Structure probing data (DMS) for a 177-nucleotide construct.
The DMS profile rests on 2,161 reads.
RNA sequence: GGGAACGACUCGAGUAGAGUCGAAAAGAUAUGGAAUGAAAUGAUGUGGUAAGUGUUGCGAUAAGAAUUGUUCGGAAACGAACGGGUUCUUUUGACGCAACACUUACCACAUCACAUUCCUAAGUCAGAUAGACAAUUCGUUCGCGAAUUGUCUAUCAAAAGAAACAACAACAACAAC
Reactivity to DMS in 0.01 (KOAc 150mM, MgCl2 10mM, bicine 150mM(pH8.5), 24C), signal-to-noise 2, nucleotides 027 to 126: g000a060u010a300u010g000g030a000a010u000g000a200a190a180u000g010a000u000g030u000g010g020u000a010a010g000u000g000u000u000g000c000g020a200u010a010a010g000a000a010u000u000g000u000u010c000g010g010a140a100a220c020g000a000a010c000g040g020g000u000u000c000u000u000u010u000g000a230c060g000c000a010a040c000a000c000u000u000a000c010c010a020c000a000u000c000a040c010a010u000u000c000c000u010a050a110g000u000c060a170